RNA sequence: GGGAACGACUCGAGUAGAGUCGAAAAUCGUUUACAGGUCCUGAAAAUGAAUUUGAGGAAGACGAAUCGAACUCAAAAGAUGUAAAUUCUGUACCAUCUUGUAAUGGUAUUAGUAGUGACGAAUUAAAACAUGACCACGGUUCGCCGUGGUCAUGUUAAAAGAAACAACAACAACAAC
Reactivity to DMS in 0.01 (KOAc 150mM, MgCl2 10mM, bicine 150mM(pH8.5), 24C), signal-to-noise 1, nucleotides 027 to 126: u010c000g050u000u000u000a170c160a180g000g000u000c000c020u040g010a260a040a210a010u010g000a200a100u000u000u000g000a010g020g000a060a150g000a050c300g000a020a120u000c000g000a010a300c000u000c000a070a000a050a190g000a010u040g020u000a070a050a150u090u000c000u000g000u000a000c010c010a090u000c090u000u050g000u000a000a020u000g000g000u000a000u030u020a060g050u000a210g050u000g000a060c040g000a000a040u010u000a050a160
Reactivity to 2A3 in 0.01 (KOAc 150mM, MgCl2 10mM, bicine 150mM(pH8.5), 24C), signal-to-noise 1, nucleotides 027 to 126: u000c030g000u000u000u010a190c130a050g200g000u000c050c000u000g240a010a010a000a010u300g090a000a000u000u000u020g100a080g000g000a000a140g000a000c000g070a050a000u170c000g000a000a000c000u000c000a000a000a000a170g030a000u060g000u100a000a000a210u090u240c000u070g000u000a000c000c000a010u020c000u240u120g080u300a020a010u020g210g000u000a000u000u130a000g120u000a090g000u050g000a000c000g010a080a000u140u030a300a040

This 177-nucleotide RNA was probed chemically with DMS and 2A3. For 2A3 the reverse transcriptase was SuperScript II with manganese. The DMS profile rests on 910 reads. The 2A3 profile rests on 461 reads. For DMS the reverse transcriptase was MarathonRT.